[RMDB]
RNA sequence: GGGAACGACUCGAGUAGAGUCGAAAAACGUUCUGUAAACUGGAAUUUGGUUGAUGAUGAGAAGGAUUUGGAAGUGUGAAACAGGAUUGUUCAGAACUUUUGGUUACCUGAAAAGAUCCCUGUAUCCUGUAUACGAUACUUUCGAGUAUCGUAUACAAAAAGAAACAACAACAACAAC
Reactivity to 2A3 in 0.01 (KOAc 150mM, MgCl2 10mM, bicine 150mM(pH8.5), 24C), signal-to-noise 3, nucleotides 027 to 126: a000c010g030u020u000c030u040g150u100a070a060a140c050u050g070g060a080a080u130u110u060g120g000u090u070g040a120u040g000a030u060g010a050g030a110a040g030g030a030u050u070u180g080g030a070a070g040u050g020u030g130a060a100a020c010a020g000g040a030u030u070g050u070u030c000a000g020a090a040c010u180u080u080u060g090g010u050u070a120c010c020u020g010a030a050a030a040g030a020u060c020c020c010u020g020u030a080u090c010c010
Reactivity to DMS in 0.01 (KOAc 150mM, MgCl2 10mM, bicine 150mM(pH8.5), 24C), signal-to-noise 9, nucleotides 027 to 126: a100c090g010u000u000c020u000g010u010a060a090a090c120u000g000g010a060a060u000u000u000g010g010u000u000g010a080u000g000a080u000g010a120g000a090a070g000g010a090u000u000u000g010g010a070a060g010u000g010u000g000a080a090a050c050a030g000g000a070u000u000g010u000u000c020a040g010a050a040c040u000u010u010u010g010g010u000u000a080c210c020u000g000a020a050a080a140g000a050u000c050c020c030u000g010u000a080u010c070c080